The record gives the reactivity of an RNA of 177 nucleotides to 2A3 and DMS. For DMS, 1,307 sequencing reads were counted. Conditions: 150 mM KOAc, 10 mM MgCl2 and 150 mM bicine (pH 8.5), 24 C. High DMS reactivity at an A or C suggests that its Watson-Crick edge is free. 2A3 adducts were read by reverse transcription with SuperScript II with manganese. The 2A3 profile rests on 1,095 reads.
[RMDB]
RNA sequence: GGGAACGACUCGAGUAGAGUCGAAAAGGCCAUGGUGCGAGCAGCUUCCACAGCCUGGCAAGACCUUUGACCGCACAGCCUCCGCGUGGCCGGAGAGGCCGUGUGGUCAUUGCGUCAUCCGGCCCAGAUCGAACUGGGCUUUCGAGCCCAGUUCGAUAAAAGAAACAACAACAACAAC
Reactivity to 2A3 in 0.01 (KOAc 150mM, MgCl2 10mM, bicine 150mM(pH8.5), 24C), signal-to-noise 2, nucleotides 027 to 126: g030g000c010c010a040u140g030g000u140g030c030g010a050g080c140a000g000c110u260u030c010c030a050c000a050g020c000c010u000g010g000c030a070a080g020a010c030c010u010u000u000g010a000c000c000g040c010a000c000a000g000c010c000u000c000c000g110c070g170u270g090g050c140c020g010g000a050g000a030g020g000c030c050g000u000g000u010g000g020u000c000a000u000u010g000c010g020u010c000a060u030c020c010g030g020c000c000c010a060g010
Reactivity to DMS in 0.01 (KOAc 150mM, MgCl2 10mM, bicine 150mM(pH8.5), 24C), signal-to-noise 1, nucleotides 027 to 126: g020g000c000c020a170u000g000g010u000g000c050g010a140g020c140a040g000c060u000u000c000c020a050c170a160g010c000c000u000g030g000c130a060a120g000a080c040c000u000u010u010g000a000c000c000g010c030a000c000a080g010c000c000u000c000c000g010c010g040u030g000g000c080c080g020g000a150g010a050g000g060c010c000g000u000g100u000g000g000u020c000a000u000u010g030c260g050u000c000a100u010c010c050g000g040c000c000c020a190g010